Structure probing data (DMS and 2A3) for a 177-nucleotide construct. Values are in units of 0.01, from 0 to 300, in steps of 10. It was measured as part of the RMDB library M2PK50. Values cover nucleotides 27 to 126. The DMS profile rests on 1,272 reads. The 2A3 profile rests on 1,628 reads.
RNA sequence: GGGAACGACUCGAGUAGAGUCGAAAAGCGACCGCCUUCGGGCGGUCGCAAAGAACGCAGGCGACACGGAAAUAAAACCGUGAUAAUUGCGAAUCGCCACAAAAACGGUAAGCUUCGGCUUACCGAACAGUAAGAACAUGUUCGCAUGUUCUUACUGAAAAGAAACAACAACAACAAC
Reactivity to DMS in 0.01 (KOAc 150mM, MgCl2 10mM, bicine 150mM(pH8.5), 24C), signal-to-noise 1, nucleotides 027 to 126: g020c030g050a070c000c040g220c010c020u000u000c240g080g090g270c000g140g010u020c030g040c000a010a020a140g030a210a080c000g000c020a050g000g000c150g000a030c010a000c000g000g000a140a050a120u000a040a070a120a110c000c030g010u000g010a000u000a070a250u000u010g000c000g000a090a090u020c010g000c000c000a100c090a090a040a090a100a030c040g000g000u000a020a000g000c010u000u010c110g040g010c000u000u000a000c000c000g010a000a020
Reactivity to 2A3 in 0.01 (KOAc 150mM, MgCl2 10mM, bicine 150mM(pH8.5), 24C), signal-to-noise 2, nucleotides 027 to 126: g030c010g010a000c060c030g130c060c060u070u100c300g040g010g000c000g000g050u030c000g000c000a010a000a010g010a040a000c020g000c090a100g030g000c010g030a000c000a000c030g000g120a030a250a020u300a070a170a040a000c000c000g010u000g020a010u010a070a230u140u130g030c000g000a020a040u030c020g000c030c000a020c010a050a060a000a010a020c020g010g000u000a000a000g000c000u010u110c220g100g020c000u040u000a000c010c000g000a000a010